This 207-nucleotide RNA was probed chemically with 2A3. Conditions: 150 mM KOAc, 10 mM MgCl2 and 150 mM bicine (pH 8.5), 24 C. 2A3 adducts were read by reverse transcription with SuperScript II with manganese.

RNA sequence: GGGAACGACUCGAGUAGAGUCGAAAAAUAGUGCGCAUGAUGGCGGAUCACUUACAGGACAUUUCUGAUUGUGUGGUUUUGGUGACAUGGAGCCAUAGUCUUGAACUCACCACUAUGAGAUAUUUUUGUAAAAUGGGUAAAGAACAGAAAUGUAAGCCCUAUCGGGCCUUUUCGAAGGCCCGAUAGGAAAAGAAACAACAACAACAAC
Reactivity to 2A3 in 0.01 (KOAc 150mM, MgCl2 10mM, bicine 150mM(pH8.5), 24C), signal-to-noise 1, nucleotides 027 to 156: a000u090a020g080u050g080c000g030c020a020u080g050a040u070g170g040c040g000g060a050u060c020a040c030u010u120a060c070a070g090g040a000c020a050u130u130u000c010u130g100a250u190u110g060u000g030u010g060g000u060u030u030u110g110g040u050g000a060c030a070u080g130g000a010g000c020c020a000u070a070g030u000c030u020u120g040a070a040c010u020c030a030c010c010a030c080u070a050u090g020a020g030a030u030a120u140u080u000u130u120g090u120a020a010a040a050u060g030g010g030u080a120a060a030g010a030a000c010a030g050a000a060a040u050g030u030a040a070g020c010